[RMDB]
RNA sequence: GGGAACGACUCGAGUAGAGUCGAAAACAGUUGCAUUUAGUAUAUUACCUCGGAAAUUACUUAUCAAUGGUGAGCCUCUCCUUAUUGAAUAUGGCAAUGUUUAUGGAAAGGAUUUUAUCAUUAGACCUGCAUACGCGUAAUUCGUUACGCGUAUGCAAAAAGAAACAACAACAACAAC
Reactivity to DMS in 0.01 (KOAc 150mM, MgCl2 10mM, bicine 150mM(pH8.5), 24C), signal-to-noise 1, nucleotides 027 to 126: c180a150g000u000u000g050c120a070u010u030u020a020g000u000a030u010a070u000u000a050c070c050u000c130g020g020a080a110a080u000u000a030c050u040u010a160u000c070a040a000u010g020g030u020g000a060g010c000c000u000c000u000c020c010u000u000a070u000u000g000a020a080u000a020u010g010g040c220a080a070u000g010u030u000u000a040u000g030g000a020a050a020g030g010a090u000u000u000u000a040u020c010a020u000u010a110g030a130c170c090